Structure probing data (2A3) for a 207-nucleotide construct.
For 2A3, 418 sequencing reads were counted.

RNA sequence: GGGAACGACUCGAGUAGAGUCGAAAACUAGAUUAAGUGCUGUUUCAGCUGAGAUCUGUGGGAUGAGUCUAAGCAUGGACAAGGGAACAGGGUGGAAGAAGAAAGUUCCAGGCAUUUUACCCUUAAACAGUUUGAUCAAAGGAAACAGGGAGAGCCAGAUUACUCCUCGUUUCGACGAGGAGUAAUCAAAAGAAACAACAACAACAAC
Reactivity to 2A3 in 0.01 (KOAc 150mM, MgCl2 10mM, bicine 150mM(pH8.5), 24C), signal-to-noise 1, nucleotides 027 to 156: c030u020a020g020a110u130u100a080a040g070u020g000c020u000g060u080u040u100c080a030g000c000u020g020a020g000a100u020c010u080g040u070g000g020g020a070u030g070a000g000u000c010u060a050a000g010c020a020u080g020g000a040c000a070a140g070g010g000a060a000c060a090g010g050g000u030g000g000a040a050g010a050a000g020a130a200a000g020u050u000c060c060a000g080g000c010a010u040u090u070u150a160c040c020c000u070u130a050a050a080c020a060g040u110u110u170g050a030u070c020a060a030a020g020g010a040a020a010c080a090g000g000g000a050g030a040g060c060c000a040